[RMDB]
RNA sequence: GGGAACGACUCGAGUAGAGUCGAAAACGAGGCCUCUUGCGAAAGACACGCAGUGCAAGAAACGUUAGCAAGACACGAAGCCCAGUGUAACAACGUGACACUAACUUUGGAAAGUCGCAGGGCUCGAAAAUAUAAAUAAAUUCGUUUAUUUAUAUUUAAAAGAAACAACAACAACAAC
Reactivity to 2A3 in 0.01 (KOAc 150mM, MgCl2 10mM, bicine 150mM(pH8.5), 24C), signal-to-noise 5, nucleotides 027 to 126: c040g030a040g100g120c010c020u130c060u110u060g000c010g030a120a020a020g130a050c030a000c090g100c090a030g050u020g060c040a110a000g030a140a080a010c030g000u000u010a030g020c080a110a030g050a090c020a000c030g070a040a030g050c030c020c020a020g010u010g020u070a100a070c040a030a010c030g020u020g060a020c010a010c090u130a180a030c000u070u030u040g060g050a120a060a020g020u010c010g000c020a010g000g000g010c000u000c000g000a020
Reactivity to DMS in 0.01 (KOAc 150mM, MgCl2 10mM, bicine 150mM(pH8.5), 24C), signal-to-noise 6, nucleotides 027 to 126: c050g010a060g000g020c030c010u030c050u020u010g010c020g010a030a040a070g010a200c090a090c180g010c150a050g000u010g000c150a110a130g010a080a070a040c040g010u010u000a070g010c120a100a070g000a060c030a030c010g000a080a140g000c050c030c050a120g020u010g000u010a060a090c120a060a070c050g010u000g010a130c060a050c020u000a060a090c080u000u010u010g010g000a060a170a110g000u000c010g010c040a020g000g000g000c010u010c030g000a090

Chemical mapping of a 177-nucleotide RNA with 2A3 and DMS. 2A3 is a SHAPE reagent: it acylates the 2'-hydroxyl of flexible nucleotides of all four kinds. The data come from the RNA Mapping Database (RMDB), library OK1LIB. For DMS, 11,861 sequencing reads were counted. Values are in units of 0.01, from 0 to 300, in steps of 10. Reactivities are given for positions 27 through 126. The reactions ran in a buffer of 150 mM KOAc, 10 mM MgCl2 and 150 mM bicine (pH 8.5), at 24 C.